[RMDB]
This 177-nucleotide RNA was probed chemically with DMS. The reactions ran in a buffer of 150 mM KOAc, 10 mM MgCl2 and 150 mM bicine (pH 8.5), at 24 C.
RNA sequence: GGGAACGACUCGAGUAGAGUCGAAAAUAGGUCGUGAAUACGCCCGGAGUACAUUCCCAAUGGAACUAGGGAACCCCUCCGGUCGUAUCCAACCUCUGUUUCGGCAGAGGAUACCGUGCUCCACAGCGCAUCUAUAACUCUUCGGAGUUAUAGAUGCAAAAGAAACAACAACAACAAC
Reactivity to DMS in 0.01 (KOAc 150mM, MgCl2 10mM, bicine 150mM(pH8.5), 24C), signal-to-noise 1, nucleotides 027 to 126: u000a040g020g000u000c300g000u040g000a080a000u000a010c000g010c240c010c030g000g000a070g000u000a060c160a300u010u000c020c000c000a090a200u020g000g010a130a130c130u000a260g000g000g020a060a060c130c140c300c010u000c000c000g010g050u000c000g020u000a000u000c000c030a120a300c010c000u010c000u010g010u000u000u030c200g040g010c000a000g020a040g000g000a130u000a040c010c020g010u030g050c120u030c000c060a150c170a160g000c180